Description
This 177-nucleotide RNA was probed chemically with DMS and 2A3. Values cover nucleotides 27 to 126. It was measured as part of the RMDB library RFMREP. The RNA was probed in 150 mM KOAc, 10 mM MgCl2 and 150 mM bicine (pH 8.5) at 24 C. For DMS the reverse transcriptase was MarathonRT. For 2A3, 3,502 sequencing reads were counted.

RNA sequence: GGGAACGACUCGAGUAGAGUCGAAAAUUGCGGCCCUAAGCACUGGAGAUGACCCUUGAGGGAGGUUUCACUCUGCAGAGAUCUCUCCCCCGUCGCGUGGCGGGUGGGAACACGUUAGUGCGGGGGGGUAGCCUUUAUACUUCGGUAUAAAGGCUACAAAAGAAACAACAACAACAAC
Reactivity to DMS in 0.01 (KOAc 150mM, MgCl2 10mM, bicine 150mM(pH8.5), 24C), signal-to-noise 3, nucleotides 027 to 126: u000u010g020c090g020g000c010c010c020u010a140a110g030c020a040c010u000g010g020a070g010a130u000g000a230c110c000c020u020u000g020a140g010g000g020a020g000g010u000u010u010c010a120c100u000c080u000g010c080a130g000a020g010a030u000c020u010c000u010c000c030c010c000c010g020u000c010g020c300g010u010g010g010c030g000g000g040u000g000g020g000a100a070c070a040c030g020u010u000a040g010u000g020c010g000g000g000g010g000g000
Reactivity to 2A3 in 0.01 (KOAc 150mM, MgCl2 10mM, bicine 150mM(pH8.5), 24C), signal-to-noise 3, nucleotides 027 to 126: u100u080g080c040g050g060c010c000c000u050a140a010g000c010a000c030u030g010g060a110g100a210u050g040a040c010c010c010u040u110g060a230g000g030g000a010g020g030u010u070u060c030a050c020u180c100u160g010c090a030g010a010g010a050u000c010u000c010u000c010c000c000c000c000g040u040c030g050c110g100u090g020g020c020g000g000g050u120g030g010g010a050a030c020a000c020g050u080u100a010g000u000g040c000g030g000g000g010g010g030